[RMDB]
RNA sequence: GGGAACGACUCGAGUAGAGUCGAAAAAAAGACGGUACUAAGCAGAUAAACUACUGUCCACCUACUCAUGCUAGGUACCCGAAAUAUCCUGACUACAAGUGGCUUGCCGCUACCGCCGCCAUCGUCAAUUUCACUGUACUUUCGAGUACAGUGAAAUAAAAGAAACAACAACAACAAC
Reactivity to 2A3 in 0.01 (KOAc 150mM, MgCl2 10mM, bicine 150mM(pH8.5), 24C), signal-to-noise 9, nucleotides 027 to 126: a000a000a010g050a010c030g000g010u030a030c040u090a060a050g010c030a030g050a130u150a120a140a040c060u130a050c020u090g050u060c010c020a040c010c010u060a070c020u050c080a080u110g010c020u030a040g000g040u040a040c000c010c000g050a030a080a010u170a040u030c020c010u050g080a070c030u090a060c080a140a070g020u020g100g010c010u040u110g030c020c020g030c030u030a050c010c030g030c000c000g000c010c000a040u040c030g080u030c010a020
Reactivity to DMS in 0.01 (KOAc 150mM, MgCl2 10mM, bicine 150mM(pH8.5), 24C), signal-to-noise 7, nucleotides 027 to 126: a060a050a070g010a270c300g010g000u000a010c030u000a110a080g010c040a050g010a090u010a030a070a100c210u040a070c030u000g010u010c030c030a070c040c010u000a070c140u020c080a070u020g000c020u010a160g020g000u000a010c010c000c010g000a110a070a070u020a070u000c010c010u000g020a090c090u000a070c140a090a070g030u010g000g010c030u010u020g000c000c040g010c030u000a060c040c050g010c010c040g000c020c010a030u010c050g020u020c050a080
Chemical mapping of a 177-nucleotide RNA with 2A3 and DMS.
Source: RMDB library OK1LIB, as collected in RNAgym.